Chemical mapping of a 177-nucleotide RNA with 2A3 and DMS.
RNA sequence: GGGAACGACUCGAGUAGAGUCGAAAAGUUUUUCUCAUUGGUUUCUCCCAUGUGCCUCACAUAUAAUAAGGGCUGCAAUGUUGGUGGGCUGGAGGAAUAAAAGAAUGAACAGGCGCACUAAAGGCAGCAGUGAUAGUCAUUUCGAUGACUAUCACUGAAAAGAAACAACAACAACAAC
Reactivity to 2A3 in 0.01 (KOAc 150mM, MgCl2 10mM, bicine 150mM(pH8.5), 24C), signal-to-noise 1, nucleotides 027 to 126: g010u050u060u000u090u040c050u010c000a030u070u100g020g050u040u130u000c050u040c010c010c000a020u040g060u050g020c050c000u070c030a040c000a010u290a010u060a300a010u070a100a100g120g020g000c000u000g000c010a030a060u130g060u180u150g080g030u010g000g090g020c020u020g000g040a040g010g120a070a020u150a060a060a010a000g210a030a120u150g010a030a020c050a090g080g000c030g000c020a010c010u040a040a020a020g060g000c010a000g010
Reactivity to DMS in 0.01 (KOAc 150mM, MgCl2 10mM, bicine 150mM(pH8.5), 24C), signal-to-noise 3, nucleotides 027 to 126: g000u010u000u010u010u000c000u000c020a190u010u000g030g010u000u010u010c040u000c050c020c060a070u000g030u000g010c040c020u000c050a150c120a120u010a120u030a080a090u010a110a110g000g030g000c020u010g010c050a100a090u000g010u000u020g010g020u010g000g010g020c010u000g000g020a080g000g000a090a060u010a060a060a070a060g010a070a070u000g000a060a080c050a200g010g020c030g010c020a030c050u020a030a070a110g000g010c030a030g010
It was measured as part of the RMDB library OK2TST. The DMS profile rests on 2,480 reads. For DMS the reverse transcriptase was MarathonRT. Conditions: 150 mM KOAc, 10 mM MgCl2 and 150 mM bicine (pH 8.5), 24 C.